[RMDB]
RNA sequence: GGGAACGACUCGAGUAGAGUCGAAAAUGCCGCGACAAGCGGUCCGGGCGCCCUUCGGGGGCCCGGCGGAGACGGGCGCCGGAGGUGUCCGACGCCUGCUCGUACCCAUCUUGCUCAGUGGAGGAUUCAACAUCCUAUAAUUCGUUAUAGGAUGUUGAAAAGAAACAACAACAACAAC
Reactivity to 2A3 in 0.01 (KOAc 150mM, MgCl2 10mM, bicine 150mM(pH8.5), 24C), signal-to-noise 6, nucleotides 027 to 126: u070g010c000c010g000c010g040a150c160a160a050g010c000g000g000u000c000c000g020g010g020c060g070c020c000c000u060u070c170g060g000g000g010g000c010c000c040g000g000c000g050g010a050g020a070c010g000g000g000c010g000c010c020g050g020a050g080g220u290g180u130c000c000g000a000c000g000c000c000u000g000c000u010c000g020u060a070c000c000c000a040u060c060u090u170g040c020u020c090a090g050u110g080g100a070g060g050a060u020u000
Reactivity to DMS in 0.01 (KOAc 150mM, MgCl2 10mM, bicine 150mM(pH8.5), 24C), signal-to-noise 2, nucleotides 027 to 126: u010g000c000c000g020c020g000a080c140a100a160g000c020g000g000u000c000c000g000g030g010c000g020c020c000c010u000u030c210g020g010g010g000g000c000c000c010g000g000c210g000g000a040g000a070c000g010g000g010c010g010c030c000g000g000a030g010g030u050g000u000c000c000g020a010c000g000c000c000u000g010c020u000c000g010u000a090c010c000c020a100u040c070u010u020g010c060u020c060a140g000u010g000g000a090g010g020a190u000u010

An RNA of 177 nucleotides, treated with 2A3 and DMS and read out base by base. DMS adducts were read by reverse transcription with MarathonRT. It was measured as part of the RMDB libraries RFM100 and RFMREP. The RNA was probed in 150 mM KOAc, 10 mM MgCl2 and 150 mM bicine (pH 8.5) at 24 C.